[RMDB]
RNA sequence: GGGAACGACUCGAGUAGAGUCGAAAAGCUCGCUACCGGCCGGAGACUCCGUGUUGUACUGCGGCAAUGACAAGUACGGGCUGCUGCACAUUCAGGCCAAGCAUGGACGCCAAUGGCACGAUAUUGCCCUAAACCUACUCUUCGGAGUAGGUUUAGGAAAAGAAACAACAACAACAAC
Reactivity to DMS in 0.01 (KOAc 150mM, MgCl2 10mM, bicine 150mM(pH8.5), 24C), signal-to-noise 3, nucleotides 027 to 126: g040c000u000c030g020c090u000a060c050c030g000g010c010c020g010g000a300g000a100c050u010c040c060g000u000g000u010u000g020u000a090c070u000g000c040g010g000c060a100a070u000g000a090c140a100a070g000u010a060c020g000g000g000c040u000g010c090u000g010c040a050c140a090u010u010c060a120g020g000c010c050a120a110g000c040a040u010g000g000a100c180g000c020c030a050a150u010g010g000c000a040c040g000a070u000a050u000u000g000c150
Reactivity to 2A3 in 0.01 (KOAc 150mM, MgCl2 10mM, bicine 150mM(pH8.5), 24C), signal-to-noise 1, nucleotides 027 to 126: g000c010u020c070g050c030u050a050c000c030g090g110c060c000g000g040a030g040a060c000u000c020c080g100u060g000u120u190g010u090a120c020u020g060c010g060g030c080a040a230u190g090a030c050a100a030g090u060a030c010g020g010g010c010u030g020c000u080g010c030a090c010a120u110u080c050a050g100g000c000c040a040a020g020c010a070u090g050g080a060c120g100c000c000a030a000u060g020g000c050a020c040g030a020u070a050u190u110g060c030
Source: RMDB library OK2TRN, as collected in RNAgym. This 177-nucleotide RNA was probed chemically with DMS and 2A3. The 2A3 profile rests on 1,096 reads.